[RMDB]
RNA sequence: GGGAACGACUCGAGUAGAGUCGAAAAGGCGCUUGUCAAGGCCGCGAACGCCGCCGGGAAGACGGCCGGUGACGCGAUGUACGGGUCCGGCAUUCAGGCCGCGCAGGGGCUCGUGAAGGGCCUCCAGUCCCAGCAGACGGCGAUCGAGAAGCAGAUGGAGGAAUAAUCUGUUCGCAGAUUAUUCCUCAAAAGAAACAACAACAACAAC
Reactivity to 2A3 in 0.01 (KOAc 150mM, MgCl2 10mM, bicine 150mM(pH8.5), 24C), signal-to-noise 1, nucleotides 027 to 156: g000g000c060g040c130u200u220g170u190c060a030a060g080g000c000c000g010c010g010a060a010c000g000c000c000g070c040c000g000g000g020a090a040g130a100c020g000g000c000c020g000g000u010g010a080c010g000c140g010a010u060g080u250a080c120g250g010g000u010c010c020g030g000c000a000u220u240c080a070g020g080c000c000g020c020g020c050a080g000g000g030g000c000u010c000g040u120g260a110a240g000g000g000c000c000u020c010c030a010g020u010c000c000c000a010g030c010a000g040a040c030g000g020c000g000a010u000c020g000a020g020a170a020g070c070a000g130a150u170g030
Description:
Structure probing data (2A3) for a 207-nucleotide construct. Reactivities are given for positions 27 through 156. Source: RMDB library OK3TST, as collected in RNAgym. Conditions: 150 mM KOAc, 10 mM MgCl2 and 150 mM bicine (pH 8.5), 24 C.